[RMDB]
RNA sequence: GGGAACGACUCGAGUAGAGUCGAAAAUAUAACACAGUAACCAUAGACGUGGUAAAGACACGCCCAUUAGCUACAAAAUUUAAGUUACGUGAUAUCGUAAGUAAUAAAGAAAGAAACGUGGAUCAAAGAGCUUGGGUAAGUGACAAUAAUGGGAUCGGACUCGAAAUAGAUUCGUCUAUUUCGAGUCAAAAGAAACAACAACAACAAC
Reactivity to DMS in 0.01 (KOAc 150mM, MgCl2 10mM, bicine 150mM(pH8.5), 24C), signal-to-noise 2, nucleotides 027 to 156: u010a040u000a090a150c040a080c120a170g000u010a060a000c000c010a050u000a030g010a050c030g070u000g000g020u010a040a110a300g000a140c000a010c000g000c000c000c010a090u000u000a040g010c050u000a110c050a010a090a060a210u010u020u000a070a140g010u000u000a040c000g040u020g000a200u000a040u010c030g020u000a040a120g020u000a050a010u010a080a080a070g000a050a040a150g060a030a070a050c070g040u010g020g020a060u010c030a030a060a190g010a170g000c030u000u000g000g010g030u000a020a170g010u000g000a030c030a010a060u010a040a080u010g000g000g020a140u040c010g070
Reactivity to 2A3 in 0.01 (KOAc 150mM, MgCl2 10mM, bicine 150mM(pH8.5), 24C), signal-to-noise 3, nucleotides 027 to 156: u120a010u050a040a040c070a010c010a060g110u060a010a100c000c010a070u060a090g130a050c040g040u000g030g000u080a090a050a000g100a010c010a010c040g030c010c000c000a050u130u100a010g010c010u070a080c090a030a120a130a110u100u190u090a120a130g040u010u020a000c030g020u030g080a090u080a060u290c020g010u020a060a000g060u020a030a070u060a130a100a040g120a070a070a000g020a050a050a020c050g030u060g010g030a010u070c050a030a030a160g060a050g000c000u010u020g000g000g010u040a120a060g010u030g010a010c030a010a050u110a110a010u090g010g000g040a050u050c040g000
Structure probing data (DMS and 2A3) for a 207-nucleotide construct. For DMS the reverse transcriptase was MarathonRT. DMS (dimethyl sulfate) methylates the pairing face of unpaired adenines and cytosines.